[RMDB]
RNA sequence: GGGAACGACUCGAGUAGAGUCGAAAAGAUCGGAUCUAUCUCAGUACACUAGCUCAUCACAGUACCAUGUGAUCGCGAUGCGCUAGGUACGCUAGCACAUGCUGCGGUACCUGAUCCGUCACGGUACUCUGCACCUCUGGUUCGCCAGAGGUGCAGAAAAAGAAACAACAACAACAAC
Reactivity to 2A3 in 0.01 (KOAc 150mM, MgCl2 10mM, bicine 150mM(pH8.5), 24C), signal-to-noise 2, nucleotides 027 to 126: g060a050u170c070g000g010a010u000c020u020a060u000c050u000c040a060g000u070a020c200a080c070u020a070g040c000u010c040a000u000c010a040c040a080g060u170a130c030c060a120u230g050u100g080a050u020c040g000c100g090a030u020g000c010g010c070u020a000g000g000u020a010c000g000c090u120a020g000c010a050c060a190u240g010c030u000g020c040g070g020u030a010c000c010u020g020a010u000c000c000g050u020c000a020c020g030g000u000a020c050
Reactivity to DMS in 0.01 (KOAc 150mM, MgCl2 10mM, bicine 150mM(pH8.5), 24C), signal-to-noise 2, nucleotides 027 to 126: g010a070u020c080g010g030a210u000c030u000a130u000c060u000c070a150g000u000a050c090a160c060u000a050g020c030u000c030a020u010c050a020c090a080g020u010a050c080c160a150u030g000u000g000a010u000c060g030c100g000a010u000g020c200g050c020u000a010g010g020u000a020c010g000c110u020a010g010c070a130c220a100u000g020c030u000g000c070g030g010u000a040c070c090u000g030a010u000c010c030g030u000c050a100c120g010g020u000a060c090
Chemical mapping of a 177-nucleotide RNA with 2A3 and DMS.
The reactions ran in a buffer of 150 mM KOAc, 10 mM MgCl2 and 150 mM bicine (pH 8.5), at 24 C.
Reactivities are rounded to 0.1 and cut off at 0 and 3.
DMS adducts were read by reverse transcription with MarathonRT.